[RMDB]
RNA sequence: GGGAACGACUCGAGUAGAGUCGAAAAGACCGUGGGUUCGCCCACGGUCAAAUCCCACGAUGCGGCGCAUCGAGCCAACAAUCCGACGGUCGGUCCGAUCAAAAAGAGCGGUGUUCGCACCGCUCAAGUGUAUACCAUUGUUCGCAAUGGUAUACACAAAAGAAACAACAACAACAAC
Reactivity to DMS in 0.01 (KOAc 150mM, MgCl2 10mM, bicine 150mM(pH8.5), 24C), signal-to-noise 5, nucleotides 027 to 126: g020a010c000c010g040u000g000g000g030u010u010c230g020c010c000c010a010c020g010g020u000c000a010a040a090u000c000c000c000a130c150g000a030u000g010c030g000g010c120g010c050a040u000c010g010a100g000c050c030a070a100c110a100a090u010c080c040g000a110c100g020g000u000c040g010g000u000c030c020g000a100u010c100a090a050a060a110a080g000a010g010c010g010g020u000g010u000u000c200g010c000a010c000c000g010c000u000c000a000a040
Reactivity to 2A3 in 0.01 (KOAc 150mM, MgCl2 10mM, bicine 150mM(pH8.5), 24C), signal-to-noise 4, nucleotides 027 to 126: g000a000c010c010g000u000g010g010g010u060u090c190g110c020c020c000a000c000g010g020u000c000a010a010a000u000c000c020c000a000c020g010a020u100g070c120g080g000c050g000c080a050u040c040g040a060g040c020c020a060a070c020a040a150u060c070c030g030a030c040g080g030u060c020g020g050u010c010c020g010a090u100c050a050a090a030a020a020g000a000g000c010g000g010u010g030u030u080c200g020c090a000c010c000g000c000u000c000a000a000

An RNA of 177 nucleotides, treated with DMS and 2A3 and read out base by base. DMS adducts were read by reverse transcription with MarathonRT. For 2A3, 7,196 sequencing reads were counted. Reactivities are given for positions 27 through 126. The DMS profile rests on 5,285 reads.